The data come from the RNA Mapping Database (RMDB), library OK2TRN. Chemical mapping of a 177-nucleotide RNA with DMS. For DMS the reverse transcriptase was MarathonRT.

RNA sequence: GGGAACGACUCGAGUAGAGUCGAAAAUUUGGGGGGCUUCUCAUGGCACCUUGAACUCUAAAACUGGGGACAGUUCCUCAUCUUGUUAGGGUAACCACUUCAAUUGUUCUCAGUAAGUAUCCUCCUGGUGUAUUGACCCAUUCGUGGGUCAAUACACAAAAGAAACAACAACAACAAC
Reactivity to DMS in 0.01 (KOAc 150mM, MgCl2 10mM, bicine 150mM(pH8.5), 24C), signal-to-noise 1, nucleotides 027 to 126: u000u000u020g020g040g010g000g000g000c050u000u010c300u000c220a120u010g040g020c020a000c010c030u030u000g000a010a040c070u010c070u000a040a100a150a010c090u000g010g000g020g000a060c050a060g050u000u000c050c030u010c080a070u010c110u010u040g020u000u000a060g010g000g000u000a100a170c120c150a020c150u010u000c090a050a040u010u000g000u000u000c000u000c030a020g020u010a020a080g000u010a030u010c020c030u000c070c050u040g000